[RMDB]
The record gives the reactivity of an RNA of 177 nucleotides to 2A3 and DMS. For 2A3, 1,024 sequencing reads were counted. In probing experiments dimethyl sulfate is read out at A N1 and C N3, which are open when not base-paired. For 2A3 the reverse transcriptase was SuperScript II with manganese. Reactivities are given for positions 27 through 126. The RNA was probed in 150 mM KOAc, 10 mM MgCl2 and 150 mM bicine (pH 8.5) at 24 C.
RNA sequence: GGGAACGACUCGAGUAGAGUCGAAAACGAGAGCCAGGAUAACAUCUACAUUCGCUACUAGAUUCGCAAUUGCAAGAUCUACAGUCAUAGCCAAUUGUGUCGCUGCAGUAUGUUUAUGCGGUGACCCAGCCAACGUUUAUUUCGAUAAACGUUGGCUAAAAGAAACAACAACAACAAC
Reactivity to 2A3 in 0.01 (KOAc 150mM, MgCl2 10mM, bicine 150mM(pH8.5), 24C), signal-to-noise 1, nucleotides 027 to 126: c030g020a010g000a020g070c060c020a030g080g020a050u030a040a020c000a040u000c040u080a030c020a040u000u070c040g020c060u010a020c000u030a040g050a100u060u040c000g040c070a000a070u070u120g010c040a070a080g020a040u000c000u120a080c050a060g000u020c020a050u080a040g040c040c020a040a110u070u100g050u000g020u070c030g000c010u030g000c000a010g000u100a050u240g160u020u140u010a070u030g030c040g000g030u000g010a010c030c000c020
Reactivity to DMS in 0.01 (KOAc 150mM, MgCl2 10mM, bicine 150mM(pH8.5), 24C), signal-to-noise 1, nucleotides 027 to 126: c140g000a070g010a150g020c040c060a090g000g040a040u000a070a140c050a180u000c020u000a100c140a050u020u000c120g010c060u030a050c080u010a090g000a080u000u000c050g000c030a090a110u000u010g000c020a060a070g020a020u000c020u010a100c140a030g000u000c040a070u020a060g000c130c040a030a130u000u010g020u020g010u000c020g040c050u000g000c020a010g050u010a110u000g010u000u030u000a070u000g010c050g000g000u010g000a020c000c040c130